[RMDB]
RNA sequence: GGGAACGACUCGAGUAGAGUCGAAAAUUAUUAGAUUCUAAAUAUUAUGUUUGGAAUCAAUUUAAGCAGAGAUUUGCAGAACAACACAACAUGCAUUGCGUGUUUGUGGAGUUUAGCAUAUUACUUUGAACGUACCUCAUUUCGAUGAGGUACGUUCAAAAGAAACAACAACAACAAC
Reactivity to 2A3 in 0.01 (KOAc 150mM, MgCl2 10mM, bicine 150mM(pH8.5), 24C), signal-to-noise 1, nucleotides 027 to 126: u240u160a070u000u200a080g000a000u000u000c020u020a000a190a000u190a040u180u300a040u300g000u020u000u000g040g000a000a000u000c020a000a000u110u120u050a000a050g020c000a000g070a040g000a080u000u090u150g000c000a020g010a070a000c050a000a000c010a000c000a000a000c000a000u000g000c050a070u110u300g010c070g000u020g140u050u130u180g020u000g000g000a000g000u000u000u000a060g000c000a030u000a020u010u060a000c040u100u060u000
Record summary:
The record gives the reactivity of an RNA of 177 nucleotides to 2A3. For 2A3 the reverse transcriptase was SuperScript II with manganese. Conditions: 150 mM KOAc, 10 mM MgCl2 and 150 mM bicine (pH 8.5), 24 C.